[RMDB]
Source: RMDB library TTRDEL, as collected in RNAgym.
This 177-nucleotide RNA was probed chemically with DMS and 2A3.
The RNA was probed in 150 mM KOAc, 10 mM MgCl2 and 150 mM bicine (pH 8.5) at 24 C.
RNA sequence: GGGAACGACUCGAGUAGAGUCGAAAAGAUAUGGAUCAUUAAAGACAUGAACCUCGGAAACGAGAGUUCAACAGCUUUGUGAUCCUAAGUCAAAACGACGAAGCCCUGUUCGCAGGGCUUCGUCGAACUAUAGACAUGCGUUCGCGCAUGUCUAUAGAAAAGAAACAACAACAACAAC
Reactivity to DMS in 0.01 (KOAc 150mM, MgCl2 10mM, bicine 150mM(pH8.5), 24C), signal-to-noise 2, nucleotides 027 to 126: g000a020u000a220u000g000g000a010u000c000a000u010u000a010a020a000g000a110c080a200u000g000a010a000c000c000u000c000g010g010a070a080a120c000g010a000g000a200g000u000u000c000a020a090c240a120g000c000u000u000u010g010u000g000a000u000c000c010u000a040a040g000u000c020a100a090a170a150c040g000a010c000g010a030a010g020c030c010c000u010g010u000u000c190g040c010a020g010g000g020c010u010u000c010g020u010c000g000a010a030
Reactivity to 2A3 in 0.01 (KOAc 150mM, MgCl2 10mM, bicine 150mM(pH8.5), 24C), signal-to-noise 1, nucleotides 027 to 126: g000a020u060a000u110g000g020a020u010c020a050u300u300a030a040a060g120a300c060a060u060g010a000a000c000c000u000c000g010g010a090a000a000c030g010a010g050a020g050u020u000c000a020a040c080a010g010c000u010u000u010g010u000g000a000u020c000c000u000a020a000g000u000c010a050a000a080a180c030g020a000c000g020a030a040g000c010c000c000u000g020u070u150c300g040c100a010g000g040g000c020u030u000c010g000u000c000g030a010a000